[RMDB]
RNA sequence: GGGAACGACUCGAGUAGAGUCGAAAAAGGUGGACUUAGGAUGGCCAAGAAUGUGGACCUGCCUCUGGACCGUCCUGGGGCAAGCUGGGUGUAAAAAUUCACUCCUCUCCCCCAUGAGUCCCAAGGUUGAAGCCUUCCAAGCCCUGGCACCUGCCUGUACGUUUAAUCUCUUCGGAGAUUAAACGUAAAAAGAAACAACAACAACAAC
Reactivity to 2A3 in 0.01 (KOAc 150mM, MgCl2 10mM, bicine 150mM(pH8.5), 24C), signal-to-noise 2, nucleotides 027 to 156: a000g080g000u050g000g010a020c020u030u030a080g040g000a010u070g000g010c010c010a020a040g120a160a080u220g040u190g090g030a070c000c010u090g020c000c000u010c060u010g040g000a150c070c050g070u060c020c020u000g000g010g000g000c120a070a020g000c050u090g020g050g000u030g010u080a080a160a130a120a070u190u150c020a010c030u070c000c000u030c040u060c000c010c020c000c010a030u100g020a010g010u000c020c040c010a020a030g080g020u000u060g070a130a020g010c010c010u030u020c030c000a030a030g000c020c000c010u010g030g010c000a030c090c020u020g030c000c010u030g010
Reactivity to DMS in 0.01 (KOAc 150mM, MgCl2 10mM, bicine 150mM(pH8.5), 24C), signal-to-noise 1, nucleotides 027 to 156: a060g020g000u010g010g010a060c020u000u000a070g060g020a060u000g010g000c000c010a040a130g030a080a090u000g000u010g000g010a080c030c050u040g020c010c010u010c020u000g030g010a060c020c090g010u000c040c000u000g020g020g030g050c080a040a050g030c070u000g040g020g060u010g020u000a030a090a100a060a220u000u000c010a070c020u000c000c010u010c030u000c070c010c010c000c030a090u010g000a110g010u000c010c010c020a080a060g000g000u010u000g010a110a170g020c000c020u000u000c040c000a040a100g000c020c000c020u010g000g000c020a050c020c010u000g010c010c040u000g020
The data come from the RNA Mapping Database (RMDB), library OK3TST.
Structure probing data (2A3 and DMS) for a 207-nucleotide construct.
The RNA was probed in 150 mM KOAc, 10 mM MgCl2 and 150 mM bicine (pH 8.5) at 24 C.
For 2A3, 906 sequencing reads were counted.